[RMDB]
Notes
This 177-nucleotide RNA was probed chemically with 2A3 and DMS. The reactions ran in a buffer of 150 mM KOAc, 10 mM MgCl2 and 150 mM bicine (pH 8.5), at 24 C. Source: RMDB library OK2TRN, as collected in RNAgym. 2A3 adducts were read by reverse transcription with SuperScript II with manganese.
RNA sequence: GGGAACGACUCGAGUAGAGUCGAAAAUAUACGCGGCAUGCCGAUUAGCCGAUCGCGCGCGGCGCUAGCGCAUAUAUCGAUGCCGUAUAUAAUUAUAGCGCCGAUUAAUCGGCCGAUUAAUGCAUCGCCUACAAGGCGUGUUCGCACGCCUUGUAGGAAAAGAAACAACAACAACAAC
Reactivity to 2A3 in 0.01 (KOAc 150mM, MgCl2 10mM, bicine 150mM(pH8.5), 24C), signal-to-noise 2, nucleotides 027 to 126: u130a000u020a040c060g010c000g000g000c010a020u040g130c030c020g010a010u020u050a030g010c000c020g050a060u140c070g000c010g020c000g000c050g140g030c020g000c000u030a030g020c040g010c170a020u070a000u010a000u150c050g060a050u060g060c080c010g040u000a030u000a000u000a070a200u280u140a080u020a100g060c090g050c030c030g000a020u130u130a120a080u010c000g030g080c050c010g040a050u050u150a100a030u140g000c040a040u020c040g000
Reactivity to DMS in 0.01 (KOAc 150mM, MgCl2 10mM, bicine 150mM(pH8.5), 24C), signal-to-noise 2, nucleotides 027 to 126: u020a050u010a080c090g010c050g020g000c050a040u010g000c180c070g000a090u000u010a140g010c040c010g000a080u000c140g000c080g010c070g030c070g030g010c000g010c050u000a020g010c130g000c090a060u010a020u010a020u000c050g000a090u000g040c040c040g030u000a080u000a020u000a130a120u010u010a090u000a060g040c130g010c000c000g000a070u010u000a070a050u010c010g030g030c020c050g000a040u000u010a020a080u000g020c040a090u010c090g030